[RMDB]
RNA sequence: GGGAACGACUCGAGUAGAGUCGAAAAAACCCGAGCCGGAGCUCAGCGAGCGCAGCCUGCAGCUCCCGCCUCGCCGUCCCGGGGGGCGUCCCGCCUCCCACCCCGCCUCUGGACUUGUCUCUUUCUCCCUUAUCUAUAUUUUCGAAUAUAGAUAAGGAAAAGAAACAACAACAACAAC
Reactivity to 2A3 in 0.01 (KOAc 150mM, MgCl2 10mM, bicine 150mM(pH8.5), 24C), signal-to-noise 4, nucleotides 027 to 126: a000a000c000c000c000g000a030g010c030c020g030g000a020g000c010u020c040a010g020c030g090a050g060c080g010c080a020g030c010c020u040g010c030a020g010c010u020c010c000c000g000c000c000u010c010g030c020c010g050u040c010c020c010g000g010g000g000g000g000c000g030u110c020c010c020g010c000c000u010c010c010c000a040c000c010c000c010g040c010c020u060c040u040g020g010a050c010u030u040g010u000c010u000c000u030u040u010c070u100c010
Reactivity to DMS in 0.01 (KOAc 150mM, MgCl2 10mM, bicine 150mM(pH8.5), 24C), signal-to-noise 3, nucleotides 027 to 126: a080a040c030c020c000g000a100g010c040c180g010g030a090g020c030u000c030a060g010c060g000a090g020c070g000c070a100g020c050c020u000g010c110a060g000c030u000c020c030c050g000c070c010u010c030g000c030c010g010u030c010c030c030g010g000g030g020g000g000c030g000u040c050c050c020g000c020c020u000c010c000c010a100c040c010c000c020g000c040c020u010c040u000g010g000a120c090u000u000g000u000c030u000c020u000u000u000c060u020c100
Source information:
An RNA of 177 nucleotides, treated with 2A3 and DMS and read out base by base. It was measured as part of the RMDB libraries RFM100 and RFMREP. Conditions: 150 mM KOAc, 10 mM MgCl2 and 150 mM bicine (pH 8.5), 24 C. The 2A3 profile rests on 12,098 reads. 2A3 adducts were read by reverse transcription with SuperScript II with manganese.